This 207-nucleotide RNA was probed chemically with 2A3. For 2A3 the reverse transcriptase was SuperScript II with manganese. The reactions ran in a buffer of 150 mM KOAc, 10 mM MgCl2 and 150 mM bicine (pH 8.5), at 24 C.
[RMDB]
RNA sequence: GGGAACGACUCGAGUAGAGUCGAAAAACAACAAGGCAUAUACUUCCAAUAUUUCCACUGUAUAAACCCAAUCCAUGGAUUAUGCAAAAGAGAUAAGUCUCUUGGAAAUGACAGUCAUUUGGUGACAAUAACAAAUCAGCAACAGAGGAGACUUUAAGGCACGGUAAUAUUUCGAUAUUACCGUGCCAAAAGAAACAACAACAACAAC
Reactivity to 2A3 in 0.01 (KOAc 150mM, MgCl2 10mM, bicine 150mM(pH8.5), 24C), signal-to-noise 2, nucleotides 027 to 156: a010c010a010a000c000a000a000g070g010c050a020u180a000u020a260c090u080u030c050c000a100a080u040a080u100u050u000c020c000a020c050u040g020u000a030u000a060a100a090c040c010c000a020a020u130c070c000a060u090g010g010a010u010u010a030u040g000c000a000a000a000a100g040a010g020a000u000a030a100g040u000c000u010c030u070u070g000g040a000a030a000u070g080a120c040a030g000u090c040a040u010u000u110g030g000u030g020a010c030a060a100u090a070a010c040a020a020a090u100c030a020g050c030a030a050c030a060g050a030g060g000a030g030a050c000u060u000u160a110a100